[RMDB]
RNA sequence: GGGAACGACUCGAGUAGAGUCGAAAAGUGACACUGUUCGCAGUGUCACAAAGUGGUGGAUCUAGAACCACAAUAACUAGAUCAAAGAUCUAGUCUUGAUCAAAAGCAUACAGUUCGCUGUAUGCAACCUUUAUCUACACUUCGGUGUAGAUAAAGGAAAAGAAACAACAACAACAAC
Reactivity to 2A3 in 0.01 (KOAc 150mM, MgCl2 10mM, bicine 150mM(pH8.5), 24C), signal-to-noise 9, nucleotides 027 to 126: g000u000g000a000c000a000c000u010g020u050u080c160g020c100a000g000u000g000u000c000a000c000a000a010a000g030u030g020g010u010g040g040a080u030c040u090a080g050a080a030c000c010a000c010a010a030u140a020a010c010u010a000g000a010u010c060a240a270a040g030a010u000c010u020a010g060u020c050u080u140g060a080u080c070a040a030a030a040g000c000a000u000a000c000a000g010u030u070c150g050c100u000g000u000a000u000g000c000a000a000
Reactivity to DMS in 0.01 (KOAc 150mM, MgCl2 10mM, bicine 150mM(pH8.5), 24C), signal-to-noise 7, nucleotides 027 to 126: g010u010g010a020c000a010c000u000g010u010u010c180g040c000a000g010u000g010u000c000a000c010a020a070a100g020u000g000g030u000g010g000a080u000c060u000a130g010a160a060c010c000a010c010a110a110u010a060a060c010u000a010g000a010u000c010a140a140a160g000a040u000c010u000a010g000u000c080u000u000g000a080u010c100a070a070a100a120g010c000a010u000a010c000a000g010u000u010c220g010c000u010g020u000a000u000g010c000a030a030
Chemical mapping of a 177-nucleotide RNA with 2A3 and DMS. For 2A3 the reverse transcriptase was SuperScript II with manganese. The reactions ran in a buffer of 150 mM KOAc, 10 mM MgCl2 and 150 mM bicine (pH 8.5), at 24 C.